[RMDB]
RNA sequence: GGGAACGACUCGAGUAGAGUCGAAAAUUGUCAUGUUUCGACAUGACAAACAUAAGAUCUAGACAAAAACGGCCAAAAAGUCUAGAUGAAAUAAAGGCCGAAGACUAGGUUAGUUCGCUAACCUAAAGUAGUAGUACUUCUUCGGAAGUACUACUACAAAAGAAACAACAACAACAAC
Reactivity to 2A3 in 0.01 (KOAc 150mM, MgCl2 10mM, bicine 150mM(pH8.5), 24C), signal-to-noise 5, nucleotides 027 to 126: u020u010g000u000c000a000u010g020u000u090u100c200g070a020c000a000u000g010a000c000a010a030a000c040a040u210a050a050g040a080u000c010u000a000g000a000c020a030a170a020a100a050c030g010g000c010c000a030a090a050a080a030g000u000c000u000a010g000a010u020g010a010a020a020u150a070a080a020g000g010c010c010g030a060a010g110a060c100u020a000g010g000u000u010a010g010u030u060c210g010c090u010a010a000c000c000u010a020a010a000
Reactivity to DMS in 0.01 (KOAc 150mM, MgCl2 10mM, bicine 150mM(pH8.5), 24C), signal-to-noise 4, nucleotides 027 to 126: u010u000g000u000c000a000u010g000u000u000u010c220g030a060c000a020u000g020a020c010a010a030a120c190a080u020a100a080g020a130u000c000u000a010g010a000c010a070a140a070a110a100c050g000g000c000c000a060a070a070a100a130g010u000c000u000a000g010a020u000g000a060a050a070u000a050a110a140g010g010c000c010g010a170a050g010a100c200u000a000g000g010u000u000a000g020u010u010c170g000c000u010a010a000c000c000u000a010a080a100